[RMDB]
RNA sequence: GGGAACGACUCGAGUAGAGUCGAAAACUGCAGGCUUUUGAAGCCGUAUCCAGGCAUCUUUCCGUUCUAAAAGCUGCAGAAGAGCUAGGUAUUACAUCUAGCGCGGUCAGUCAUCAGUUGCGGAUUAGACCUAUUACCCUUUCGAGGGUAAUAGGUCAAAAGAAACAACAACAACAAC
Reactivity to DMS in 0.01 (KOAc 150mM, MgCl2 10mM, bicine 150mM(pH8.5), 24C), signal-to-noise 1, nucleotides 027 to 126: c030u010g020c080a070g010g000c000u000u010u010u000g000a080a050g020c030c000g010u010a080u000c110c070a250g000g020c040a060u000c020u010u000u010c170c060g030u000u000c030u010a070a000a060a040g000c010u000g000c030a050g000a170a120g020a090g020c010u000a000g000g000u000a050u000u020a120c240a000u000c010u000a010g000c030g010c080g050g020u000c030a070g020u000c050a110u000c100a040g000u020u000g010c010g010g000a110u000u000a250